Description
An RNA of 207 nucleotides, treated with 2A3 and DMS and read out base by base. Source: RMDB library OK3TST, as collected in RNAgym. For DMS the reverse transcriptase was MarathonRT. 2A3 adducts were read by reverse transcription with SuperScript II with manganese.
RNA sequence: GGGAACGACUCGAGUAGAGUCGAAAAGCAGAUAUCUCAAGUGAGUGUGCACAACUUCAUUCACUACAGGUACUGAUGCCUCACUCAACCUAUGGUGAAAUCAGUAGUGUGAAGUUGUGCACAUUACUGCAUUCAUUAUAGUGAGUGUGCGGGCUGACGACACUAGAAUGUUCGCAUUCUAGUGUCGAAAAGAAACAACAACAACAAC
Reactivity to 2A3 in 0.01 (KOAc 150mM, MgCl2 10mM, bicine 150mM(pH8.5), 24C), signal-to-noise 4, nucleotides 027 to 156: g000c010a020g030a100u100a050u120c060u040c070a050a050g080u090g080a020g010u020g010u000g000c010a000c000a000a060c000u020u000c010a070u150u130c030a030c040u100a050c080a060g090g140u080a060c090u090g030a080u110g050c040c010u030c000a010c000u270c030a090a220c060c080u230a240u240g020g020u010g010a040a020a020u030c020a010g010u020a000g000u000g000u000g010a000a010g000u000u000g000u010g010c000a000c010a000u000u000a000c000u010g010c010a000u000u020c000a000u010u120a090u080a200g080u020g040a010g010u010g010u000g000c040g020g040g020c020u040g010a040
Reactivity to DMS in 0.01 (KOAc 150mM, MgCl2 10mM, bicine 150mM(pH8.5), 24C), signal-to-noise 2, nucleotides 027 to 156: g040c080a120g000a100u010a010u010c000u000c050a120a030g020u010g030a100g050u000g020u010g000c090a100c070a050a050c060u000u010c010a120u000u000c040a090c020u000a050c030a040g040g010u010a170c060u010g000a130u000g040c090c090u010c030a030c000u000c060a070a110c190c110u010a040u000g030g010u000g000a040a110a210u010c070a110g010u010a050g020u010g010u000g000a050a050g040u010u000g040u010g000c010a030c000a010u000u010a000c000u010g020c070a120u000u000c030a020u010u010a070u010a070g040u010g010a030g020u010g060u000g010c070g010g040g020c000u000g040a270